[RMDB]
RNA sequence: GGGAACGACUCGAGUAGAGUCGAAAAAGCGCUGGUAUAUUACGAUAUACCAGCGCACUCUUGUCCUUCAUUCCACCGGAGUCUGUCUUAUGCCAACCAGAUUUCAGUGGAGUGAAGCUCAGGAGAACAUUCCGCAAGGCUUCGGCCUUGCGGAAUGAAAAGAAACAACAACAACAAC
Reactivity to 2A3 in 0.01 (KOAc 150mM, MgCl2 10mM, bicine 150mM(pH8.5), 24C), signal-to-noise 2, nucleotides 027 to 126: a000g020c010g010c000u010g050g020u000a000u000a000u020u090a070c300g010a040u030a000u000a000c010c000a010g030c000g010c010a020c000u010c010u000u010g000u040c020c000u000u000c000a000u000u010c000c000a000c010c010g000g020a010g010u000c000u000g100u010c020u170u300a250u240g160c050c070a060a090c020c000a010g000a000u000u030u000c010a000g000u010g000g000a000g000u010g000a000a000g000c010u000c000a000g040g010a010g010a020a000
This 177-nucleotide RNA was probed chemically with 2A3. Source: RMDB library RFM100, as collected in RNAgym. Values cover nucleotides 27 to 126. The RNA was probed in 150 mM KOAc, 10 mM MgCl2 and 150 mM bicine (pH 8.5) at 24 C. Reactivities are rounded to 0.1 and cut off at 0 and 3. For 2A3 the reverse transcriptase was SuperScript II with manganese.